[RMDB]
RNA sequence: GGGAACGACUCGAGUAGAGUCGAAAAGGAGAUCGAAGACGACCGACGUCAGCACGGUCCGGAUGUAGGUCCGCAUGCAUCCCAGUUGACGAAACUUAACGAUUUCCAAAGCGGACAAGAAGUCAAACCAUCAUCAUGAUUUCGAUCAUGAUGAUGGAAAAGAAACAACAACAACAAC
Reactivity to 2A3 in 0.01 (KOAc 150mM, MgCl2 10mM, bicine 150mM(pH8.5), 24C), signal-to-noise 8, nucleotides 027 to 126: g010g010a020g010a010u010c010g040a100a040g090a080c120g040a030c020c050g070a090c030g100u180c090a020g040c090a020c050g060g010u030c040c030g000g010a000u000g000u010a000g000g040u000c000c000g000c000a000u010g000c000a000u010c000c010c010a020g000u010u020g030a060c080g060a090a050a000c020u050u040a060a010c010g030a030u000u000u000c020c010a040a100a010g010c010g000g000a000c010a010a060g160a060a010g070u100c070a080a020a030
Reactivity to DMS in 0.01 (KOAc 150mM, MgCl2 10mM, bicine 150mM(pH8.5), 24C), signal-to-noise 4, nucleotides 027 to 126: g000g000a010g010a010u000c000g030a090a100g000a140c260g010a120c090c070g040a150c050g010u020c100a120g000c120a100c060g030g020u010c060c160g000g000a010u000g000u010a050g000g010u000c000c000g000c020a050u000g000c040a030u000c010c000c280a020g000u000u020g010a130c100g000a110a080a080c060u000u010a120a140c060g000a050u010u000u020c000c010a040a080a100g020c000g000g000a010c010a160a090g000a080a090g010u030c100a070a060a140